The record gives the reactivity of an RNA of 207 nucleotides to 2A3.
Source: RMDB library M2RFPK, as collected in RNAgym.
The RNA was probed in 150 mM KOAc, 10 mM MgCl2 and 150 mM bicine (pH 8.5) at 24 C.
RNA sequence: GGGAACGACUCGAGUAGAGUCGAAAAGUUAACGCUGUUUUAUUGGCGCAAAGGUUUACGGAUAAACAACUAAUAAUUAAACCUUUUGUGUGCGAAACGUGGUUGUUUAACGUACUCUUUAAUCGCUUUGGGGAUGUGUCCUUCGGGACACAUCCAAGAACGUGGUUUGAUUCGUCAAACCACGUUCAAAAGAAACAACAACAACAAC
Reactivity to 2A3 in 0.01 (KOAc 150mM, MgCl2 10mM, bicine 150mM(pH8.5), 24C), signal-to-noise 2, nucleotides 027 to 156: g010u010u030a070a010c040g000c020u000g050u060u030u010u080a110u060u250g000g000c020g000c030a060a030a010g020g000u000u000u000a010c050g050g040a120u080a090a050a040c020a000a000c020u110a030a100u100a130a040u190u040a070a000a030c020c000u100u100u160u160g070u080g020u050g060c090g010a050a170a010c090g010u030g000g000u050u030g010u030u050u040a030a020c010g020u020a020c000u010c000u040u090u110a180a180u070c040g020c050u010u060u210g110g030g040g000a010u010g000u000g010u000c020c000u000u020c250g040g000g010a000c000a000c000a000u000c000c000a000a000